[RMDB]
The record gives the reactivity of an RNA of 207 nucleotides to DMS and 2A3.
It was measured as part of the RMDB library M2RFPK.
For 2A3, 5,438 sequencing reads were counted.
For DMS, 3,866 sequencing reads were counted.
The RNA was probed in 150 mM KOAc, 10 mM MgCl2 and 150 mM bicine (pH 8.5) at 24 C.
2A3 adducts were read by reverse transcription with SuperScript II with manganese.
RNA sequence: GGGAACGACUCGAGUAGAGUCGAAAAAGAUCCACGCUACGGCGUGGAUCAUACGUUCAUCCCUAUUGGGACGGAAGUAGGCAUAGUGCCGAAGGAACGCAUUAGUCAUGCGCUACGGCGCAUGACACACAUCAGAGUCACUUCGGUGACUCUGAAACCUACUAUCUAUCUUCGGAUAGAUAGUAGGAAAAGAAACAACAACAACAAC
Reactivity to DMS in 0.01 (KOAc 150mM, MgCl2 10mM, bicine 150mM(pH8.5), 24C), signal-to-noise 2, nucleotides 027 to 156: a130g010a010u000c000c010a000c000g020c020u000a140c270g020g000c000g060u010g010g000a000u000c000a090u010a020c030g020u000u000c020a270u000c000c000c000u000a160u010u010g020g000g000a020c030g000g000a050a050g000u000a090g010g040c010a140u000a090g020u010g030c010c000g010a170a140g020g020a080a070c100g000c040a040u010u000a120g020u000c030a050u000g010c030g030c000u010a090c300g100g000c010g060c000a000u000g000a020c000a020c070a050c070a140u000c000a020g000a040g020u000c000a020c020u000u000c300g030g000u000g010a000c000u010c000u000g000a010a020a100
Reactivity to 2A3 in 0.01 (KOAc 150mM, MgCl2 10mM, bicine 150mM(pH8.5), 24C), signal-to-noise 5, nucleotides 027 to 156: a000g010a000u000c000c000a000c010g000c000u030a040c300g090g000c010g000u000g000g000a000u000c000a000u000a000c000g000u000u010c000a010u050c000c000c000u120a300u120u300g000g000g010a010c010g030g010a020a020g000u020a020g010g000c040a070u140a270g140u170g160c000c010g010a010a000g040g020a010a020c020g000c050a060u080u140a030g000u010c000a000u010g000c010g000c000u020a030c250g090g000c000g000c000a000u000g000a000c000a000c000a000c000a080u040c000a000g000a000g010u010c000a000c000u050u070c150g110g000u010g000a000c000u000c000u000g000a000a000a000